Structure probing data (2A3 and DMS) for a 207-nucleotide construct. Values cover nucleotides 27 to 156. Reactivities are rounded to 0.1 and cut off at 0 and 3. The RNA was probed in 150 mM KOAc, 10 mM MgCl2 and 150 mM bicine (pH 8.5) at 24 C. 2A3 adducts were read by reverse transcription with SuperScript II with manganese.

[RMDB]
RNA sequence: GGGAACGACUCGAGUAGAGUCGAAAACGUCUAUCCGGAAGGUGGGAAUUUUCGCGGCGUGCAGAAGCUCCUGGAUCCGGUCCAUCUCACCAAUAAACUGACAGAAUACUAGCGCCUUCUCCUUCGGGUGCGUCUGGAUCAUCUCCAUGAGCGCAUCGUGUGUAGGAGGAUUCGUCCUCCUACACACAAAAGAAACAACAACAACAAC
Reactivity to 2A3 in 0.01 (KOAc 150mM, MgCl2 10mM, bicine 150mM(pH8.5), 24C), signal-to-noise 4, nucleotides 027 to 156: c020g020u020c040u050a080u050c040c010g030g060a080a050g010g040u050g010g050g090a120a170u040u060u120u160c120g020c070g050g010c040g020u080g010c020a040g030a180a020g030c020u030c020c020u040g030g030a030u010c040c020g050g030u030c010c010a040u030c010u040c010a050c010c020a020a040u170a080a110a080c060u110g090a040c040a070g150a060a090u090a130c080u070a040g050c010g010c010c000u040u040c040u050c010c020u120u110c070g020g000g010u010g020c010g010u000c020u000g000g000a020u070c020a080u050c100u000c050c010a040u130g010a040g070c020g000c030a040u050c080
Reactivity to DMS in 0.01 (KOAc 150mM, MgCl2 10mM, bicine 150mM(pH8.5), 24C), signal-to-noise 1, nucleotides 027 to 156: c100g040u000c060u010a090u000c030c000g010g000a020a120g030g040u000g010g020g030a080a100u010u000u020u020c080g020c130g040g040c080g120u010g000c060a180g010a040a170g060c060u000c000c020u000g000g000a110u020c080c050g030g020u000c020c090a000u000c020u000c000a080c020c030a120a200u000a030a050a090c060u010g010a090c040a060g020a040a120u000a150c060u010a100g000c010g080c070c010u000u010c030u000c120c060u000u020c060g090g050g030u000g030c000g030u010c000u030g040g000a050u000c110a100u000c300u040c020c010a060u000g000a080g060c020g010c030a080u010c010